Conditions: 150 mM KOAc, 10 mM MgCl2 and 150 mM bicine (pH 8.5), 24 C. Structure probing data (DMS and 2A3) for a 207-nucleotide construct. For 2A3, 1,285 sequencing reads were counted. DMS adducts were read by reverse transcription with MarathonRT.
RNA sequence: GGGAACGACUCGAGUAGAGUCGAAAACAGAGCUAAUGAGCCACAUACAUACCCAAGGUGAAAGCUCCUUCUCUCGCAAUGUGUAACUCAUGAUUCUCAUGACCCCUGGUUGGAGAGAUCCGGACUAUAGACUAGAGGGUGUUCGCACCCUCUAGAAGAUGCUACUUGUGUUCGCACAAGUAGCAUCAAAAGAAACAACAACAACAAC
Reactivity to DMS in 0.01 (KOAc 150mM, MgCl2 10mM, bicine 150mM(pH8.5), 24C), signal-to-noise 2, nucleotides 027 to 156: c060a170g010a030g000c090u010a140a150u000g010a140g040c040c020a040c060a060u020a100c080a150u010a110c030c020c040a070a080g000g000u000g030a060a100a200g000c020u010c010c020u010u000c000u000c030u000c070g000c060a110a070u000g030u000g010u020a060a060c020u000c030a080u020g010a170u000u000c040u000c010a120u000g000a190c050c000c020c030u000g010g020u000u010g000g020a100g010a110g000a110u000c060c000g010g000a150c030u010a150u010a090g010a200c000u000a000g010a020g010g040g010u020g000u010u020c280g040c020a030c010c000c000u000c010u000a000g010a070a110
Reactivity to 2A3 in 0.01 (KOAc 150mM, MgCl2 10mM, bicine 150mM(pH8.5), 24C), signal-to-noise 2, nucleotides 027 to 156: c050a030g050a010g000c010u070a110a090u100g030a030g060c060c000a030c000a050u210a030c010a020u140a070c050c000c000a020a020g060g020u070g070a100a050a040g020c020u080c010c010u040u040c020u000c010u000c020g010c110a070a070u050g040u020g020u140a070a040c000u000c020a010u010g050a130u210u040c100u020c040a030u070g100a100c010c010c000c030u080g050g000u040u050g040g020a030g000a020g020a030u010c050c020g010g000a020c030u050a070u180a300g070a050c000u000a010g000a010g000g000g010u010g000u000u030c090g020c030a000c010c000c000u000c000u000a000g000a010a000